RNA sequence: GGGAACGACUCGAGUAGAGUCGAAAAGCACGAGGGACCGAGAGGUGGAACGGGACCACCCAAGCAGCUUGCUCUUGCUACGGGUGAAAUGGUGUGCAGAUGGCUUCUGGAAACAUAGCUCAGUCUACUUUCCUACACAGUUCGCUGUGUAGGAAAGAAAAGAAACAACAACAACAAC
Reactivity to DMS in 0.01 (KOAc 150mM, MgCl2 10mM, bicine 150mM(pH8.5), 24C), signal-to-noise 3, nucleotides 027 to 126: g010c050a060c070g010a110g010g000g020a090c080c030g000a090g010a120g010g030u000g020g000a120a100c160g000g030g020a120c100c020a040c000c000c010a130a100g010c040a080g010c080u010u010g020c110u000c050u010u000g010c040u020a090c180g000g000g000u000g000a050a070a070u010g000g020u010g020u000g030c040a060g000a040u010g010g000c030u000u010c070u010g030g000a070a020a060c110a070u000a070g000c020u010c120a050g010u010c050u000a110
Reactivity to 2A3 in 0.01 (KOAc 150mM, MgCl2 10mM, bicine 150mM(pH8.5), 24C), signal-to-noise 3, nucleotides 027 to 126: g010c030a030c070g030a080g000g040g040a050c020c030g080a070g000a030g110g050u060g030g030a140a060c040g020g020g050a010c030c010a000c030c010c000a000a010g020c020a010g000c010u140u170g020c030u060c040u120u120g020c020u050a070c080g020g020g020u010g010a030a040a030u140g000g000u050g030u030g030c020a010g000a080u070g060g010c030u080u060c020u070g030g070a070a050a020c030a070u090a060g010c010u010c130a010g040u000c020u040a090

Source: RMDB library OK2TRN, as collected in RNAgym. Chemical mapping of a 177-nucleotide RNA with DMS and 2A3. The reactions ran in a buffer of 150 mM KOAc, 10 mM MgCl2 and 150 mM bicine (pH 8.5), at 24 C. For DMS the reverse transcriptase was MarathonRT.